[RMDB]
RNA sequence: GGGAACGACUCGAGUAGAGUCGAAAAGGGGUCGACUUGGAUUUAUACAAGAACUGUUAGCGAGGUACCUGAAGCCUCCACGGGUACUACCCACCGCUAAUGAAAUCCUUGUAUUGUCAGUCGACGGAGGCACCCAAAACUAACCUUCGGGUUAGAAACAAAGACUAGGAUUCGUCCUAGUCUUUGUAAAAGAAACAACAACAACAAC
Reactivity to 2A3 in 0.01 (KOAc 150mM, MgCl2 10mM, bicine 150mM(pH8.5), 24C), signal-to-noise 5, nucleotides 027 to 156: g040g000g030g010u020c010g010a000c030u150u270g130g010a040u140u300u140a130u100a040c010a000a010g070a160a050c070u300g010u060u000a000g000c000g010a010g020g000u000a000c010c010u020g040a110a010g010c000c000u030c010c010a000c000g000g000g000u010a000c000u010a030c030c080c020a060c010c010g000c000u010a000a020u050g040a060a080a020u060c010c000u010u000g000u010a040u030u090g050u060c070a050g000u000c000g030a000c020g010g010a000g010g000c000a020c000c000c000a020a120a030a050c010u010a000a010c010c000u030u070c230g040g000g020u020u020a020g010a060a060
Reactivity to DMS in 0.01 (KOAc 150mM, MgCl2 10mM, bicine 150mM(pH8.5), 24C), signal-to-noise 2, nucleotides 027 to 156: g010g000g000g000u000c030g020a030c000u010u010g050g010a060u000u000u000a010u000a030c020a000a050g020a040a050c070u020g000u000u000a030g040c020g000a160g020g000u000a000c000c010u000g000a050a140g030c010c050u000c040c000a210c030g010g010g020u010a000c010u000a040c000c010c000a300c090c000g040c000u010a020a030u000g020a100a080a120u010c040c010u000u000g020u000a010u000u000g010u010c030a070g000u000c010g000a040c010g000g040a070g030g040c020a070c000c000c010a030a040a120a150c010u000a000a040c010c000u000u000c300g070g010g010u000u000a010g000a090a190